[RMDB]
RNA sequence: GGGAACGACUCGAGUAGAGUCGAAAACGCUGGGUAUGGACAGCAUGAACUACUGAGUGCUGAAGCGCGCACGGCAUUGUCAGCAUGCUGCCAUACCUGUGCUGAAGCGCGCACGGCAACCGAAAGGUGCGAAAACAAGUAGGGUUCGCCCUACUUGCGGUGAUUAAAGGUUCGCCUUUAAUCACCGAAAAGAAACAACAACAACAAC
Reactivity to DMS in 0.01 (KOAc 150mM, MgCl2 10mM, bicine 150mM(pH8.5), 24C), signal-to-noise 2, nucleotides 027 to 156: c100g010c020u000g010g030g020u010a030u010g000g000a140c020a020g060c010a140u000g010a130a190c040u000a180c070u010g000a110g000u010g000c020u010g030a060a080g040c000g010c000g030c010a300c060g000g010c000a030u000u000g010u000c040a030g000c030a040u000g000c020u000g000c030c000a040u000a010c030c010u010g000u000g000c020u000g010a110a070g040c000g000c070g000c000a300c060g020g000c000a050a090c020c020g000a080a090a180g010g020u000g030c010g000a100a060a070a150c010a030a050g000u000a020g000g020g020u000u000c290g010c000c000c000u020a000c000u010u000g000
Reactivity to 2A3 in 0.01 (KOAc 150mM, MgCl2 10mM, bicine 150mM(pH8.5), 24C), signal-to-noise 6, nucleotides 027 to 156: c030g010c010u030g010g000g000u010a000u000g030g060a120c000a000g000c000a010u020g030a020a050c070u250a050c060u300g060a120g170u020g000c000u020g040a220a070g020c030g000c010g000c010a010c000g000g010c010a030u050u250g190u160c010a020g050c010a070u020g000c000u000g000c000c000a000u000a000c000c000u000g000u020g000c010u060g020a140a060g000c010g000c010g000c020a020c010g040g000c020a070a060c020c000g060a080a040a030g020g010u050g030c030g060a070a100a020a070c010a000a000g010u000a000g010g020g030u040u060c220g140c030c000c000u010a000c000u000u000g010